[RMDB]
RNA sequence: GGGAACGACUCGAGUAGAGUCGAAAAGAAAAUCCCGGUCCCGUCAGACAAAUCAGUGACAUGAUGGUCAUAGCGAAACCACACGCACGAAAUGUCACUGAUGAAAAAGUGCGUGUGACCAAAAAAACAAAAUUAAACGAUUCGUCGUUUAAUUUUGAAAAGAAACAACAACAACAAC
Reactivity to DMS in 0.01 (KOAc 150mM, MgCl2 10mM, bicine 150mM(pH8.5), 24C), signal-to-noise 3, nucleotides 027 to 126: g000a130a080a100a130u000c010c000c000g010g010u000c010c010c020g010u000c110a080g010a120c130a070a160a040u000c010a020g010u000g000a050c000a050u010g010a110u010g020g030u010c070a120u000a100g020c070g000a060a090a090c140c040a040c040a040c030g020c030a010c040g000a050a120a050u000g010u010c010a020c000u000g010a000u010g000a020a050a100a070a110g000u000g000c020g000u010g010u000g000a090c050c020a010a010a040a070a050a040a090
Reactivity to 2A3 in 0.01 (KOAc 150mM, MgCl2 10mM, bicine 150mM(pH8.5), 24C), signal-to-noise 2, nucleotides 027 to 126: g030a010a120a010a040u010c030c000c000g020g040u030c000c010c000g040u030c030a050g040a180c060a060a160a030u020c000a000g010u000g010a000c000a020u050g050a090u140g110g090u120c060a060u070a080g090c090g060a120a030a070c070c010a010c010a000c070g030c000a020c080g060a230a090a020u040g000u000c000a010c010u010g000a010u020g010a020a010a040a010a010g030u040g000c000g000u040g020u030g000a010c010c020a030a230a000a000a000a010a010